[RMDB]
RNA sequence: GGGAACGACUCGAGUAGAGUCGAAAAAAGGAACCAUUUCAAAUACACCCAUGGGACCGUUCCAAAUGGCGCUCUUACACUUCCCAAUCGUCUGAACAUAUUUUUCAAUAGUCUUGGGACCAAUAUCAAAAGACGACGAAUUCGUUCGUCGUCUUUUAAAAGAAACAACAACAACAAC
Reactivity to 2A3 in 0.01 (KOAc 150mM, MgCl2 10mM, bicine 150mM(pH8.5), 24C), signal-to-noise 2, nucleotides 027 to 126: a000a020g040g000a000a000c030c020a020u000u130u100c090a100a050a040u070a110c020a100c020c000c000a040u070g020g000g050a080c010c000g030u030u000c040c000a090a000a000u140g030g000c010g050c030u000c020u090u160a080c070a080c070u020u010c000c000c020a000a090u110c010g170u000c030u010g140a210a060c100a060u060a140u060u050u050u030u060c060a120a040u060a060g030u020c020u040u060g000g030g000a010c000c030a000a090u120a060u200c030
Reactivity to DMS in 0.01 (KOAc 150mM, MgCl2 10mM, bicine 150mM(pH8.5), 24C), signal-to-noise 2, nucleotides 027 to 126: a030a050g010g010a030a190c020c020a100u000u010u050c090a060a060a120u020a140c100a040c100c010c040a060u000g010g000g000a280c020c040g000u000u030c040c050a000a130a020u030g020g000c000g000c020u000c060u000u020a080c190a070c180u030u000c010c000c010a090a100u020c080g000u000c050u000g000a040a010c080a130u000a080u010u000u010u020u000c090a050a050u010a160g000u000c060u020u020g010g000g000a070c100c080a000a120u020a030u000c250
The record gives the reactivity of an RNA of 177 nucleotides to 2A3 and DMS.